The record gives the reactivity of an RNA of 177 nucleotides to 2A3 and DMS.
[RMDB]
RNA sequence: GGGAACGACUCGAGUAGAGUCGAAAAGCAUAGCGUCAAGUUGGUUGACCAGAAGUCUGGUUACCAAACAGAGUAAAACCAAAAGGUUAGACGCACUCUGUGAAAAAGUACGAAAGUACAAAGAUAAAUACAUUGGAUACUUCGGUAUCCAAUGUAUAAAAGAAACAACAACAACAAC
Reactivity to 2A3 in 0.01 (KOAc 150mM, MgCl2 10mM, bicine 150mM(pH8.5), 24C), signal-to-noise 3, nucleotides 027 to 126: g040c040a080u070a090g020c010g050u030c190a170a100g070u050u020g030g050u040u160g010a010c000c010a010g020a300a030g250u130c020u020g000g000u000u000a020c010c000a020a020a020c010a000g050a010g050u080a040a160a040a030c010c010a140a140a100a170g050g030u050u030a040g010a020c020g020c010a010c000u010c010u010g000u030g010a110a050a030a020a030g000u000a000c000g040a140a040a010g000u010a010c000a020a090a000g110a030u140a100a180
Reactivity to DMS in 0.01 (KOAc 150mM, MgCl2 10mM, bicine 150mM(pH8.5), 24C), signal-to-noise 4, nucleotides 027 to 126: g010c130a060u000a040g030c030g010u010c060a130a140g020u000u000g000g000u000u020g040a000c000c000a020g000a300a180g010u010c000u000g010g000u000u000a040c010c000a020a060a070c040a040g000a050g000u000a080a050a050a070c000c010a070a060a100a120g000g010u000u000a070g010a060c040g020c060a140c000u000c000u010g010u000g000a040a070a070a090a070g000u000a000c000g000a070a090a150g010u000a000c000a060a100a080g000a090u010a060a050